An RNA of 177 nucleotides, treated with DMS and read out base by base. The reactions ran in a buffer of 150 mM KOAc, 10 mM MgCl2 and 150 mM bicine (pH 8.5), at 24 C. Values are in units of 0.01, from 0 to 300, in steps of 10. The data come from the RNA Mapping Database (RMDB), library OK2TST.

RNA sequence: GGGAACGACUCGAGUAGAGUCGAAAAUUACUAUGUGCUCUCUUUUAGUGCUUGCUUCAAUUCCUAAGAUAAUACCCCUAGCACUAGCAUCUCAUCAAGGAGCUCCAAGUCCACUGAAAGCUGGUACCUGCUCAAUAGAGUUCGCUCUAUUGAGCAGAAAAGAAACAACAACAACAAC
Reactivity to DMS in 0.01 (KOAc 150mM, MgCl2 10mM, bicine 150mM(pH8.5), 24C), signal-to-noise 1, nucleotides 027 to 126: u020u000a130c080u020a120u010g040u000g010c010u010c060u000c040u000u010u000u020a080g010u010g030c020u010u010g030c070u000u000c050a060a190u010u010c020c000u020a060a110g020a050u000a070a150u010a300c020c010c020c070u000a050g040c030a040c030u000a040g000c080a040u000c000u000c030a080u000c120a110a040g000g000a050g020c030u000c080c000a000a090g000u000c050c010a070c040u040g000a070a040a060g010c110u000g010g010u010a050c090

High DMS reactivity at an A or C suggests that its Watson-Crick edge is free.